[RMDB]
RNA sequence: GGGAACGACUCGAGUAGAGUCGAAAAGGAGUGCUACCGAAAGGUAGCACUCCAACAAAUCGGUGUAAGUGAAGCCUGUCUUACACCGUGCGGCACAGCGGAAACGCUGAUGUCGUAUACAGGGCUAUGAUCCAGCUAAUUUCGAUUAGCUGGAUCAAAAAGAAACAACAACAACAAC
Reactivity to DMS in 0.01 (KOAc 150mM, MgCl2 10mM, bicine 150mM(pH8.5), 24C), signal-to-noise 1, nucleotides 027 to 126: g010g020a000g000u010g000c000u000a000c000c000g000a110a130a220g020g000u000a000g010c000a030c000u010c000c000a000a060c140a060a120a070u010c030g010g000u000g000u000a000a020g010u000g000a120a070g020c000c020u000g000u000c010u020u000a000c000a010c010c010g020u010g000c000g000g000c000a000c010a030g010c040g000g000a120a070a180c040g050c000u000g000a040u000g030u000c000g000u030a020u010a090c280a090g000g000g000c020u010a280